[RMDB]
RNA sequence: GGGAACGACUCGAGUAGAGUCGAAAAGAUAUGGACCACUGUAGACAUGCUCCUCGGAAACGAGUGAGCAACAGCUAUGGUGGUCCUAAGUCAAAGUCACAACUAUUGUUCGCAAUAGUUGUGACAAGGUAUAUAUCAAGUUCGCUUGAUAUAUACCAAAAGAAACAACAACAACAAC
Reactivity to 2A3 in 0.01 (KOAc 150mM, MgCl2 10mM, bicine 150mM(pH8.5), 24C), signal-to-noise 8, nucleotides 027 to 126: g020a010u040a020u090g000g000a000c000c000a000c010u020g010u020a020g080a200c040a080u030g000c010u000c000c000u000c010g010g010a020a030a020c010g010a010g040u290g030a000g000c000a000a010c030a010g020c000u000a000u010g010g000u000g000g000u000c000c000u000a010a000g000u000c030a040a040a030g000u000c000a000c000a010a000c000u010a000u010u020g050u090u100c300g010c190a000a010u000a000g000u000u010g000u020g000a000c000a010a000
Reactivity to DMS in 0.01 (KOAc 150mM, MgCl2 10mM, bicine 150mM(pH8.5), 24C), signal-to-noise 9, nucleotides 027 to 126: g000a030u000a220u010g000g010a020c000c000a000c000u000g020u000a000g000a240c070a180u000g000c000u000c000c010u000c000g020g000a060a040a110c000g010a020g010u010g010a010g000c000a000a010c270a090g010c000u000a000u000g010g020u000g000g010u000c000c000u000a000a050g000u000c030a100a110a150g000u000c000a010c000a000a010c000u000a000u000u000g000u000u010c220g020c010a010a000u000a000g010u000u000g010u000g000a000c000a010a010
Structure probing data (2A3 and DMS) for a 177-nucleotide construct. Conditions: 150 mM KOAc, 10 mM MgCl2 and 150 mM bicine (pH 8.5), 24 C.